Chemical mapping of a 177-nucleotide RNA with DMS and 2A3. DMS adducts were read by reverse transcription with MarathonRT. The data come from the RNA Mapping Database (RMDB), library M2PK50. For DMS, 829 sequencing reads were counted.
RNA sequence: GGGAACGACUCGAGUAGAGUCGAAAAGGUAGGGCAUUCGUGCCCUACCACACCUCUAAGCAGAUUGGCGAGGACGACGUCGCGGCCCACGUUUACGAACAACUACUCUCUCCUUCGGGAGAGAGAAAGAAAUCGUUGGAUUCGUCCAACGAUUUCUAAAAGAAACAACAACAACAAC
Reactivity to DMS in 0.01 (KOAc 150mM, MgCl2 10mM, bicine 150mM(pH8.5), 24C), signal-to-noise 1, nucleotides 027 to 126: g010g000u000a000g000g000g010c020a050u000u010c290g000u010g000c000c000c000u000a000c010c000a050c120a060c030c020u010c070u000a160a100g010c040a030g030a180u000u000g010g020c030g010a070g000g000a010c100g010a040c090g010u000c030g070c020g010g010c000c000c000a040c120g000u000u000u000a100c090g010a100a100c120a060a050c150u000a170c000u000c000u000c000u000c000c000u000u030c160g020g030g000a000g020a010g000a000g010a010a070
Reactivity to 2A3 in 0.01 (KOAc 150mM, MgCl2 10mM, bicine 150mM(pH8.5), 24C), signal-to-noise 1, nucleotides 027 to 126: g000g000u010a010g040g000g030c010a010u000u100c180g100u040g010c000c000c000u010a000c000c000a000c000a000c000c010u000c030u030a010a060g020c000a040g060a300u120u220g040g050c030g020a060g040g000a030c030g000a030c000g020u010c010g010c020g020g040c020c010c000a030c000g000u000u060u100a130c110g070a070a010c020a080a000c050u120a030c000u010c000u010c000u010c000c030u010u080c170g170g010g010a010g000a000g010a000g000a000a040